[RMDB]
RNA sequence: GGGAACGACUCGAGUAGAGUCGAAAAAGGGAAGAAUAUAAUUUAGAAAGGAGAUUCCGCCCCAGCUUGCGGUGCGGCCGAAAGGCUGUAAGGCAUCCCGGAGAGGGGAGGCAAGGCGAAAGCCAAAAACGGUACACCAUCUUCGGAUGGUGUACAAUCUAGACAUUAGGUUCGCCUAAUGUCUAGAAAAAGAAACAACAACAACAAC
Reactivity to DMS in 0.01 (KOAc 150mM, MgCl2 10mM, bicine 150mM(pH8.5), 24C), signal-to-noise 2, nucleotides 027 to 156: a070g010g040g000a120a070g010a190a100u000a110u000a070a110u010u000u000a240g000a140a080a150g010g010a160g020a260u010u010c020c000g080c020c040c010c020a050g000c020u000u000g060c040g000g000u000g020c030g000g030c000c000g000a090a150a280g010g000c000u010g030u000a060a050g040g030c080a080u000c010c000c020g040g010a200g000a160g010g030g020g020a040g010g010c050a150a080g010g000c020g010a170a070a210g010c000c020a020a050a010a040a040c130g010g010u000a000c010a000c000c010a000u010c010u000u010c300g050g000a030u000g010g010u030g000u000a000c000a040a030
Reactivity to 2A3 in 0.01 (KOAc 150mM, MgCl2 10mM, bicine 150mM(pH8.5), 24C), signal-to-noise 2, nucleotides 027 to 156: a000g040g040g000a050a010g060a090a020u150a020u060a260a130u190u170u220a120g070a080a070a050g070g010a050g020a030u130u000c020c010g000c000c000c000c000a030g070c070u060u120g060c040g020g000u030g020c030g030g000c010c010g010a030a000a040g010g010c000u000g040u110a030a010g070g000c030a030u030c020c030c020g000g000a040g010a000g020g010g000g000a020g050g000c070a040a050g010g000c010g030a080a010a000g020c030c010a060a020a050a020a020c060g070g000u010a000c000a000c010c000a000u000c010u010u020c070g070g000a000u000g000g000u010g000u000a000c000a000a000